[RMDB]
RNA sequence: GGGAACGACUCGAGUAGAGUCGAAAACAAUAGGUAUUUGUGCGUUAAGUGUCAUUGGAACGGGAAGUUGUCCAUUGAACGAAAAAUGAAUUUAUUUCAUUUGCGGUGCAUAUAUCGCAUUCCAAAACAGCUACCUACUGUUCGCAGUAGGUAGCUGAAAAGAAACAACAACAACAAC
Reactivity to DMS in 0.01 (KOAc 150mM, MgCl2 10mM, bicine 150mM(pH8.5), 24C), signal-to-noise 1, nucleotides 027 to 126: c240a060a070u030a100g000g010u010a000u000u000u000g020u000g020c000g000u050u070a070a120g010u030g010u000c090a000u000u040g020g040a000a000c130g000g000g000a010a210g000u010u000g000u010c000c030a010u000u000g000a050a070c220g010a000a050a000a000a040u000g000a000a010u060u010u010a120u150u000u000c000a000u000u010u000g020c050g100g010u000g010c040a000u000a030u000a010u020c000g000c180a170u000u000c090c020a050a040a120a090
Reactivity to 2A3 in 0.01 (KOAc 150mM, MgCl2 10mM, bicine 150mM(pH8.5), 24C), signal-to-noise 3, nucleotides 027 to 126: c070a020a110u140a190g010g010u000a000u010u030u010g020u000g000c000g010u050u160a010a010g020u030g030u000c000a010u010u000g000g030a020a040c060g050g030g100a020a060g060u260u220g020u070c000c010a010u000u000g000a010a020c020g050a000a000a000a000a020u020g010a020a010u090u190u220a150u110u170u010c000a000u000u000u010g010c000g020g050u000g020c020a000u000a000u000a000u010c040g000c060a060u000u050c000c000a010a030a070a110
Source: RMDB library OK1LIB, as collected in RNAgym.
Chemical mapping of a 177-nucleotide RNA with DMS and 2A3.
Conditions: 150 mM KOAc, 10 mM MgCl2 and 150 mM bicine (pH 8.5), 24 C.
2A3 adducts were read by reverse transcription with SuperScript II with manganese.